[RMDB]
RNA sequence: GGGAACGACUCGAGUAGAGUCGAAAAGGAAGGAGUGAUUUCAAUGACUGCAGAUAUCAUUUCAACAAUUGGUGAUUUUGUAAAAUGGAUUUUAGAUACAGUAAAAAAAUUCACUAAAUAAUAGUAGCAUCUAGUAACCGUUCGCGGUUACUAGAUGAAAAGAAACAACAACAACAAC
Reactivity to DMS in 0.01 (KOAc 150mM, MgCl2 10mM, bicine 150mM(pH8.5), 24C), signal-to-noise 2, nucleotides 027 to 126: g000g030a050a080g020g010a000g000u010g010a030u020u000u000c060a180a150u020g000a060c120u030g010c210a030g000a020u000a030u000c020a020u040u000u000c050a080a150c150a070a090u000u020g000g000u000g000a050u000u020u000u000g000u000a010a050a080a100u000g010g000a040u010u010u000u020a090g000a120u000a040c040a020g000u040a000a010a000a080a020a000a100u000u000c010a030c010u000a010a020a110u020a100a090u020a070g020u020a070g010
Reactivity to 2A3 in 0.01 (KOAc 150mM, MgCl2 10mM, bicine 150mM(pH8.5), 24C), signal-to-noise 6, nucleotides 027 to 126: g060g040a030a030g070g070a010g000u030g000a020u000u050u040c050a040a070u110g040a080c030u060g010c040a040g030a110u060a010u050c000a010u020u110u060c030a040a040c020a060a100u090u070g060g030u110g140a120u040u060u020u030g040u060a040a050a060a050u050g050g020a040u030u050u080u140a060g040a050u130a070c060a020g080u120a030a080a190a060a020a000a010u060u060c010a000c020u050a060a030a130u220a080a100u060a090g100u050a010g060
An RNA of 177 nucleotides, treated with DMS and 2A3 and read out base by base. The data come from the RNA Mapping Database (RMDB), library RFM100. For 2A3, 2,920 sequencing reads were counted. DMS adducts were read by reverse transcription with MarathonRT. The reactions ran in a buffer of 150 mM KOAc, 10 mM MgCl2 and 150 mM bicine (pH 8.5), at 24 C. Values are in units of 0.01, from 0 to 300, in steps of 10.